[RMDB]
RNA sequence: GGGAACGACUCGAGUAGAGUCGAAAAGAUAUGGAUCCACCGUAGACAUGCCUUAGGAUCGGAAACGAUCCGAAGGGCAACAGCUACGUUGGAUCCUAAGUCAAAUCUCAAUCUUCGGAUUGAGAAAUCAGUAUCAUCUCUUCGGAGAUGAUACUGAAAAAGAAACAACAACAACAAC
Reactivity to DMS in 0.01 (KOAc 150mM, MgCl2 10mM, bicine 150mM(pH8.5), 24C), signal-to-noise 3, nucleotides 027 to 126: g000a040u000a300u000g010g000a010u000c000c000a030c060c000g010u000a010g010a080c160a290u010g020c010c000u010u000a300g000g000a010u000c010g010g000a060a080a100c010g010a010u000c010c010g000a150a230g000g030g030c000a050a060c300a230g010c000u000a000c000g000u000u000g000g000a000u000c000c010u000a010a070g000u000c020a110a100a170u010c010u010c000a010a000u000c010u000u020c260g030g000a030u030u000g000a020g000a020a070a080
Reactivity to 2A3 in 0.01 (KOAc 150mM, MgCl2 10mM, bicine 150mM(pH8.5), 24C), signal-to-noise 2, nucleotides 027 to 126: g010a020u050a030u140g010g000a000u000c000c000a010c000c020g010u000a010g060a110c100a250u300g020c030c020u290u030a010g000g000a000u000c000g000g000a060a060a010c000g000a000u000c000c000g010a000a030g010g000g000c000a050a020c030a050g050c000u000a000c010g000u000u000g000g000a000u000c000c010u000a040a000g020u000c030a100a030a150u000c010u000c000a000a010u000c010u090u110c300g260g000a010u010u010g010a000g000a060a040a030

The record gives the reactivity of an RNA of 177 nucleotides to DMS and 2A3. Values cover nucleotides 27 to 126. The 2A3 profile rests on 5,444 reads.